[RMDB]
RNA sequence: GGGAACGACUCGAGUAGAGUCGAAAACGGAAAACCCACGCCUGGCAGGCCGGCGGCCGCCGCCAUCGCGAGCAGACUCGCCGGCGUCACGCCCGGCAGGGCGGGCAGCCCCACAGCCGGCAGAGCGGUUAUAUCAGUCGUUCGCGACUGAUAUAACAAAAGAAACAACAACAACAAC
Reactivity to DMS in 0.01 (KOAc 150mM, MgCl2 10mM, bicine 150mM(pH8.5), 24C), signal-to-noise 3, nucleotides 027 to 126: c110g000g000a130a060a150a150c020c000c000a200c100g010c020c030u000g020g020c030a060g010g030c020c030g000g010c040g000g000c050c040g010c030c020g000c040c160a070u010c150g010c010g010a100g030c060a150g010a130c030u000c020g020c010c030g020g010c010g000u000c060a080c150g010c070c010c030g000g020c140a100g000g010g000c040g010g010g010c060a150g000c040c010c020c070a080c140a140g000c000c000g000g030c050a060g000a110g020c080g020
Reactivity to 2A3 in 0.01 (KOAc 150mM, MgCl2 10mM, bicine 150mM(pH8.5), 24C), signal-to-noise 1, nucleotides 027 to 126: c070g040g020a060a070a070a140c000c000c000a020c050g020c010c000u040g050g030c040a040g100g020c020c010g050g000c000g020g000c020c020g020c000c000g020c050c060a180u250c170g000c040g050a030g030c060a020g040a240c020u030c090g000c020c000g000g030c010g020u020c020a030c060g010c080c020c000g030g030c030a070g040g000g000c110g010g110g020c020a020g010c000c000c020c000a080c020a010g000c000c000g050g000c040a010g010a020g070c070g020
Background
Structure probing data (DMS and 2A3) for a 177-nucleotide construct. It was measured as part of the RMDB library OK2TRN. For 2A3 the reverse transcriptase was SuperScript II with manganese. For 2A3, 2,133 sequencing reads were counted. For DMS the reverse transcriptase was MarathonRT.